[RMDB]
RNA sequence: GGGAACGACUCGAGUAGAGUCGAAAAGUGAGAGUUAUCAGGUUGGCGACGGAACUGCAGGCUUGUCGGACUCCAAUUUACAGAAAUCCAAACAGAUUUUAGUUGACACGAUCUGCAAUCAUUACCGAAACUUAUACGCUUUCGAGCGUAUAAGUUUAAAAGAAACAACAACAACAAC
Reactivity to DMS in 0.01 (KOAc 150mM, MgCl2 10mM, bicine 150mM(pH8.5), 24C), signal-to-noise 4, nucleotides 027 to 126: g000u010g000a090g030a120g010u000u010a090u000c040a080g000g020u010u000g010g010c080g010a070c090g000g010a070a110c110u000g010c030a050g010g010c030u000u000g020u000c040g010g000a050c050u010c110c110a060a070u000u020u010a070c160a220g000a020a020a050u000c030c080a060a110a140c190a040g000a050u000u000u000u000a040g030u000u000g020a040c050a060c100g010a030u010c020u000g010c030a050a120u000c070a060u000u010a110c070c050g000
Reactivity to 2A3 in 0.01 (KOAc 150mM, MgCl2 10mM, bicine 150mM(pH8.5), 24C), signal-to-noise 1, nucleotides 027 to 126: g010u060g010a080g000a030g040u080u070a110u110c000a010g040g080u040u030g070g000c030g040a010c010g040g000a100a020c040u050g000c000a030g040g050c020u070u040g010u000c070g070g040a000c000u040c040c020a040a070u120u120u020a120c080a010g080a040a070a030u100c110c050a090a060a130c030a050g060a050u040u000u040u110a030g010u040u080g000a000c010a000c100g070a120u000c010u010g000c010a020a040u040c050a080u070u220a060c080c000g040